[RMDB]
RNA sequence: GGGAACGACUCGAGUAGAGUCGAAAACAUUUGGACCCAAACCAGGUUCUUAUAUAAUUAGUACUAAGCCUAUUUUGUUUUCAGGUAAACCUUACAACUUUAGACGUUUGUCUAGGUGGCUAAGGCCUAACCCUACUAAUGGACCUCUGGAGAGCAGCAUACGUUCGGAGUUCGCUCCGAACGUAUGAAAAGAAACAACAACAACAAC
Reactivity to 2A3 in 0.01 (KOAc 150mM, MgCl2 10mM, bicine 150mM(pH8.5), 24C), signal-to-noise 1, nucleotides 027 to 156: c090a090u080u050u180g050g030a090c000c000c000a110a000a000c050c000a040g000g050u090u090c100u230u200a290u100a140u150a300a050u200u080a040g010u000a110c080u110a090a120g010c000c010u060a090u010u200u130u060g090u130u090u070u150c040a000g050g000u030a100a000a000c000c000u010u010a040c010a030a020c060u200u300u020a010g060a090c060g270u100u220u300g010u090c040u000a000g000g000u040g020g150c050u010a000a010g050g070c010c000u140a110a050c010c010c000u040a050c000u050a030a030u080g010g010a000c000c060u030c080u090g040g050a100g030a000g110c030a010g030

Chemical mapping of a 207-nucleotide RNA with 2A3. The RNA was probed in 150 mM KOAc, 10 mM MgCl2 and 150 mM bicine (pH 8.5) at 24 C. For 2A3 the reverse transcriptase was SuperScript II with manganese. The 2A3 profile rests on 275 reads.